Description
This 207-nucleotide RNA was probed chemically with 2A3. Values cover nucleotides 27 to 156. It was measured as part of the RMDB library PDB130.
RNA sequence: GGGAACGACUCGAGUAGAGUCGAAAAACCGUUUGACUUCACUAAGUUUGAUAAGACUAAAUGUCCUAUUCAAGCCGUGAUAGUCGUUCCUCGUGCUUAGUAACUAAGGAUGAAAUGCAUGUCUAAGACAGCAUCUUCGCGUAACUCUCUCAGCGCAGUAAUACGCCACGUUCGCGUGGCGUAUUACAAAAGAAACAACAACAACAAC
Reactivity to 2A3 in 0.01 (KOAc 150mM, MgCl2 10mM, bicine 150mM(pH8.5), 24C), signal-to-noise 2, nucleotides 027 to 156: a000c060c020g000u030u030u090g030a020c000u030u010c010a000c010u080a110a070g020u030u040u020g000a000u000a030a000g010a000c010u110a160a180a240u300g000u000c010c010u020a090u040u080c000a000a010g000c000c000g000u030g020a060u070a030g000u000c000g000u000u010c000c000u020c020g020u040g000c010u030u020a040g020u100a070a080c110u040a120a020g070g010a070u100g020a050a050a040u060g020c130a280u030g030u000c090u120a090a140g040a020c010a010g030c010a020u010c160u130u070c040g020c020g150u030a030a080c040u050c000u000c000u000c120a020g020c020g000c040a020